[RMDB]
RNA sequence: GGGAACGACUCGAGUAGAGUCGAAAAUCGCCGGCCCCAAGGAUCUGCAGUUCAACCCCAGCACGGUGGGGCCCGUCGUCAAGGGGGUGACGGUUAAGAUCCUCGACGAGAACGGCAAUGAGGUGCCGAGGUAAUGAAGGUUCGCCUUCAUUACCUCAAAAGAAACAACAACAACAAC
Reactivity to DMS in 0.01 (KOAc 150mM, MgCl2 10mM, bicine 150mM(pH8.5), 24C), signal-to-noise 4, nucleotides 027 to 126: u000c030g000c020c010g000g000c070c010c010c030a140a010g010g000a010u000c010u000g000c030a120g000u000u000c030a050a100c010c000c010c000a120g010c170a020c020g010g010u010g010g000g010g030c280c000c020g020u010c060g020u000c100a170a140g020g020g010g010g020u000g010a010c020g000g000u000u010a100a040g000a020u000c000c010u000c040g000a050c050g020a050g010a090a180c050g000g000c000a050a110u000g000a140g000g000u000g010c050c040
Reactivity to 2A3 in 0.01 (KOAc 150mM, MgCl2 10mM, bicine 150mM(pH8.5), 24C), signal-to-noise 4, nucleotides 027 to 126: u070c040g020c050c010g040g050c040c020c010c000a010a010g010g000a010u000c010u060g010c040a050g030u190u070c040a080a120c000c000c000c000a020g030c070a010c020g000g070u070g000g060g050g070c040c030c010g010u030c030g010u020c050a150a250g040g000g000g000g010u000g000a010c010g020g050u300u110a080a030g000a010u000c010c020u040c030g070a060c040g020a020g030a150a050c030g010g010c020a000a070u180g060a080g040g110u080g020c030c040